[RMDB]
RNA sequence: GGGAACGACUCGAGUAGAGUCGAAAAUCUGUUCGAUUUGGGGAGCGCGCCACUGGCGGGCGACUGCACAAGAUCCUCACAUCUCCUCGAUCAUGUCGCGCUAGCACGAACCAUGGUACGUUUAUAUCGAGCACGAAACAUGAACGUGCUCGAAAGGUAAAAGACUAGAUUUCGAUCUAGUCUUUUAAAAAGAAACAACAACAACAAC
Reactivity to DMS in 0.01 (KOAc 150mM, MgCl2 10mM, bicine 150mM(pH8.5), 24C), signal-to-noise 3, nucleotides 027 to 156: u010c060u020g000u000u000c070g020a130u000u010u010g010g000g010g010a070g010c040g020c020g030c020c040a070c050u010g020g010c070g010g040g030c010g000a060c050u000g020c040a100c050a080a120g000a060u000c010c020u040c060a060c060a140u000c010u000c030c000u000c030g000a080u020c030a090u000g010u000c040g030c090g000c020u000a110g000c050a090c030g000a100a130c060c030a070u000g000g010u000a060c050g030u010u000u000a090u010a130u020c010g000a040g020c020a040c030g000a060a050a100c120a160u000g010a130a240c000g000u000g000c000u000c010g020a010a030a030g000g030
Reactivity to 2A3 in 0.01 (KOAc 150mM, MgCl2 10mM, bicine 150mM(pH8.5), 24C), signal-to-noise 2, nucleotides 027 to 156: u110c090u050g100u080u090c040g010a060u020u030u150g030g020g000g010a080g010c060g000c010g000c020c030a070c080u070g070g040c070g020g000g020c040g000a050c040u110g030c040a040c030a200a000g050a110u040c010c000u040c030a060c020a100u030c070u030c030c020u020c030g060a060u040c030a010u090g000u030c030g000c000g000c120u030a050g000c040a020c150g030a000a030c030c000a070u090g060g000u070a050c080g020u130u150u030a180u050a060u090c010g000a010g000c000a000c000g050a100a100a010c050a080u080g040a080a040c000g000u000g020c000u000c000g000a030a010a000g030g020